[RMDB]
RNA sequence: GGGAACGACUCGAGUAGAGUCGAAAAGGGCCGUUCACUGGAUCCGAAGCCUCUAGAAGUAUAAUAUAGGCACUCCAUACCCUACUCCGACUCAAUACGUCCCCGUCGUACAGAAUGGUAACAUAUCGAACACAACCUAACUUCGGUUAGGUUGUAAGUUUAUAGGCUGAUUCGUCAGCCUAUAAACAAAAGAAACAACAACAACAAC
Reactivity to DMS in 0.01 (KOAc 150mM, MgCl2 10mM, bicine 150mM(pH8.5), 24C), signal-to-noise 1, nucleotides 027 to 156: g000g000g010c040c060g000u000u000c080a140c030u000g020g000a090u010c040c110g020a080a160g000c000c010u000c030u000a160g010a140a170g020u000a060u010a130a150u000a180u010a060g000g000c050a080c070u000c020c020a180u000a060c010c000c020u020a060c040u010c060c000g000a040c000u000c030a100a120u000a080c090g030u000c000c000c020c020g000u000c070g010u010a130c080a130g010a060a060u000g010g000u000a100a130c050a040u000a080u010c060g010a040a130c140a030c000a030a020c000c000u010a010a030c000u000u000c300g000g030u010u000a000g000g010u000u000g010u000a010a060
Reactivity to 2A3 in 0.01 (KOAc 150mM, MgCl2 10mM, bicine 150mM(pH8.5), 24C), signal-to-noise 4, nucleotides 027 to 156: g040g000g000c090c030g140u180u140c130a110c110u070g010g030a090u070c060c070g040a130a030g010c050c010u090c060u070a070g060a290a030g210u130a140u110a300a110u130a070u080a050g000g000c010a020c060u020c010c000a030u060a050c000c000c020u010a050c040u040c070c020g000a000c000u020c020a060a110u090a150c020g020u030c000c010c020c010g080u070c010g020u030a070c030a050g080a120a090u090g040g030u090a090a020c030a040u120a090u210c070g050a090a000c020a000c000a050a000c020c000u000a010a000c000u030u010c040g080g000u010u000a000g000g000u000u000g000u000a010a000